[RMDB]
RNA sequence: GGGAACGACUCGAGUAGAGUCGAAAACUGUGGCACCAGGUUAACGACCUCGGGUAUGGUAACAACGCCUGAGAUUGGACAAUCCGCAGCCAAGCUCCCUCAUGGGAAGAAGGUUCAGAGACUAGAUGGUUGUGGGUUGAACACGUUUAUCUGAAGUAGUAUUCGCUUAGUUCGCUAAGCGAAUACUAAAAGAAACAACAACAACAAC
Reactivity to 2A3 in 0.01 (KOAc 150mM, MgCl2 10mM, bicine 150mM(pH8.5), 24C), signal-to-noise 1, nucleotides 027 to 156: c050u100g060u130g160g020c050a030c050c000a000g010g010u000u080a010a000c020g080a080c000c040u010c000g030g000g000u000a180u180g120g000u180a130a030c070a080a050c080g000c040c000u010g010a020g030a090u030u150g010g010a000c000a000a000u000c000c000g000c000a000g000c000c000a030a010g000c000u010c010c070c000u110c080a210u260g000g040g040a040a090g060a050a040g040g030u100u200c100a040g040a010g080a130c010u080a080g020a210u050g040g000u010u020g010u000g000g030g000u000u000g000a000a000c060a000c000g020u000u030u000a020u040c000u030g010a120a030g030u040
Chemical mapping of a 207-nucleotide RNA with 2A3. 2A3 adducts were read by reverse transcription with SuperScript II with manganese. The RNA was probed in 150 mM KOAc, 10 mM MgCl2 and 150 mM bicine (pH 8.5) at 24 C.